[RMDB]
RNA sequence: GGGAACGACUCGAGUAGAGUCGAAAAGAUUAGGUGUCCGUGAGGAAUCGAAACGAGGCACGAGAUUCCAAGGUCUCUGUAUCACGCCGUCUCGUGACGUCUAGCUUGUCACAUUCGGCAUAACAAACGUAAGAAGUAGGUUCGCCUACUUCUUACGAAAAGAAACAACAACAACAAC
Reactivity to 2A3 in 0.01 (KOAc 150mM, MgCl2 10mM, bicine 150mM(pH8.5), 24C), signal-to-noise 5, nucleotides 027 to 126: g050a050u070u130a040g000g050u020g010u010c020c010g020u020g040a050g050g160a060a120u130c050g030a050a060a030c070g010a160g060g000c020a010c060g010a030g010a040u070u010c050c020a040a040g070g010u010c020u000c030u090g100u100a100u130c050a010c150g000c010c000g020u000c020u070c110g010u010g010a000c000g020u050c060u070a050g020c050u070u100g000u010c000a010c000a010u020u010c000g000g030c000a010u040a030a000c070a030a070a010
Reactivity to DMS in 0.01 (KOAc 150mM, MgCl2 10mM, bicine 150mM(pH8.5), 24C), signal-to-noise 6, nucleotides 027 to 126: g020a060u010u020a120g000g010u000g010u000c000c000g010u030g010a190g010g020a110a120u010c070g010a070a110a060c080g000a110g000g000c040a040c070g000a180g000a030u000u000c010c030a100a130g010g000u000c010u010c040u010g000u010a080u010c130a090c170g020c010c010g020u000c010u010c150g030u000g010a010c010g000u020c110u050a100g010c200u020u010g000u000c010a000c000a020u000u000c000g000g020c000a030u030a040a070c150a050a080a140